Notes: This 177-nucleotide RNA was probed chemically with 2A3 and DMS. The DMS profile rests on 2,778 reads.
RNA sequence: GGGAACGACUCGAGUAGAGUCGAAAAAUACAGUUCGAAAGUACAAAGAAGCAAUCAAACCGAGCAGUGAAAUGAUGGCUUCAGUCCAAAAUGGGCAAACACUGCAGACGGAGCCAAAGGCAAAUAAUACAAAAGAGAGAUUCGUCUCUCUUUUGUAAAAAGAAACAACAACAACAAC
Reactivity to 2A3 in 0.01 (KOAc 150mM, MgCl2 10mM, bicine 150mM(pH8.5), 24C), signal-to-noise 2, nucleotides 027 to 126: a000u130a010c050a030g060u000u140c020g030a050a110a010g040u050a050c020a040a180a010g050a030a040g020c050a030a050u060c010a070a030a040c060c000g030a000g000c030a020g050u020g100a050a080a180u060g070a020u050g020g020c000u060u070c070a030g010u000c000c010a020a270a050a230u110g000g040g020c000a000a040a000c020a010c010u020g010c010a030g100a040c020g070g020a020g040c010c000a060a020a030g030g010c020a030a030a090u130a060a060
Reactivity to DMS in 0.01 (KOAc 150mM, MgCl2 10mM, bicine 150mM(pH8.5), 24C), signal-to-noise 3, nucleotides 027 to 126: a100u000a040c090a090g010u000u000c040g000a140a060a090g000u010a030c090a050a120a120g010a040a050g000c030a050a040u010c050a050a080a100c040c030g010a110g010c040a060g020u000g010a080a080a070u010g010a050u000g000g000c020u010u000c030a070g000u010c030c040a020a030a100a070u020g010g000g010c050a060a060a110c020a030c030u000g000c040a080g000a140c050g000g000a120g000c020c010a020a070a100g020g030c060a070a050a020u000a040a130

Notes
Reactivities are given for positions 27 through 126.